[RMDB]
RNA sequence: GGGAACGACUCGAGUAGAGUCGAAAAGUCAAUACCACCCGCAGUUACGAUCAAACCUUCACCGGCUAAGGCUUCAGUAGCAGGACCCACGCAAAGAUUAUUUUUAACGCCAUCUUGCAUGUCUUUGCAUUCUACCAAAGUUCGCUUUGGUAGAAUGAAAAGAAACAACAACAACAAC
Reactivity to 2A3 in 0.01 (KOAc 150mM, MgCl2 10mM, bicine 150mM(pH8.5), 24C), signal-to-noise 2, nucleotides 027 to 126: g000u000c020a020a090u060a180c010c010a010c030c020c020g000c020a040g020u060u080a060c060g010a050u060c070a080a030a050c000c000u050u070c060a060c040c030g050g000c030u050a080a000g060g000c020u040u030c020a060g030u100a000g070c020a000g000g060a050c000c000c010a020c050g000c020a080a050a040g000a040u060u080a100u040u300u070u150u100a080a030c030g020c020c020a030u010c040u030u070g000c040a030u100g040u060c010u010u000u000g000
Reactivity to DMS in 0.01 (KOAc 150mM, MgCl2 10mM, bicine 150mM(pH8.5), 24C), signal-to-noise 2, nucleotides 027 to 126: g000u010c100a110a100u000a090c070c030a110c040c030c020g000c080a020g010u000u000a100c170g000a080u010c090a070a110a100c070c030u000u000c060a070c090c050g010g010c050u000a040a060g030g000c030u000u000c050a060g000u010a070g010c010a060g030g000a080c050c030c020a040c140g030c020a010a040a060g000a060u000u010a080u010u010u020u000u000a060a100c140g020c040c060a050u010c030u000u000g030c050a090u020g000u000c020u000u000u000g000

The record gives the reactivity of an RNA of 177 nucleotides to 2A3 and DMS. The data come from the RNA Mapping Database (RMDB), library RFMREP.